[RMDB]
RNA sequence: GGGAACGACUCGAGUAGAGUCGAAAAGAUUCGGCGGCCCUGUCAUGAGGCCGAAACGAAGGCACGUACUCCUUCGAAUGGCGUCGGGGAGUCAGCGGCUAUAUAUGCGCCUAAUGCUGGCAUCCGGGAGAACCCUCAUCCUUCGGGAUGAGGGUAAGCAAGCCAUGAUAUUCGUAUCAUGGCUUGCAAAAGAAACAACAACAACAAC
Reactivity to 2A3 in 0.01 (KOAc 150mM, MgCl2 10mM, bicine 150mM(pH8.5), 24C), signal-to-noise 1, nucleotides 027 to 156: g090a020u140u150c070g080g000c000g000g050c110c000c000u030g090u060c040a050u030g050a030g060g000c070c030g040a020a000a000c000g000a010a000g000g000c110a030c300g080u160a000c020u000c010c050u050u010c000g000a020a020u020g000g000c050g150u030c000g000g000g040g000a190g020u020c000a000g010c020g000g000c050u000a000u000a020u000a070u300g120c090g000c010c030u180a300a030u300g000c010u000g020g000c040a070u000c000c000g050g000g000a190g020a040a040c000c000c000u000c000a000u000c000c000u070u070c280g080g000g000a000u000g000a000g000g000g000u000a000a000